[RMDB]
RNA sequence: GGGAACGACUCGAGUAGAGUCGAAAAAGCAAGAAUAGAAUUGUUUAUAUCGAGGGUGACACUUCAGGCCGUUUGCUAUAGUUGUUUGGUUUGUGGCCUGGUGGCGGAAACGGCGGUGUGUUAUGGCCAAUAUUAAUAUAUUCGUAUAUUAAUAUUGAAAAGAAACAACAACAACAAC
Reactivity to DMS in 0.01 (KOAc 150mM, MgCl2 10mM, bicine 150mM(pH8.5), 24C), signal-to-noise 3, nucleotides 027 to 126: a070g000c040a030a040g010a090a100u040a120g000a120a140u000u030g000u000u020u030a060u010a070u020c040g010a060g000g000g030u010g000a040c030a030c050u020u020c060a020g030g020c000c000g010u000u000u010g000c030u010a050u010a070g000u000u000g010u000u010u010g000g020u010u000u010g020u010g000g010c030c010u000g020g030u000g000g020c040g000g010a040a050a080c120g010g000c020g000g010u010g020u000g010u000u000a060u010g000g020c160
Reactivity to 2A3 in 0.01 (KOAc 150mM, MgCl2 10mM, bicine 150mM(pH8.5), 24C), signal-to-noise 1, nucleotides 027 to 126: a000g080c050a070a020g020a140a080u100a060g080a000a070u090u020g020u000u090u070a110u020a020u120c040g040a080g030g030g000u030g030a030c000a000c050u070u120c020a030g000g000c000c010g020u000u040u040g010c010u000a010u020a070g010u000u090g040u030u040u070g030g000u000u030u060g050u020g000g000c000c020u000g000g000u010g010g000c050g000g000a050a070a040c070g010g040c000g000g000u010g010u010g000u020u050a070u080g010g040c000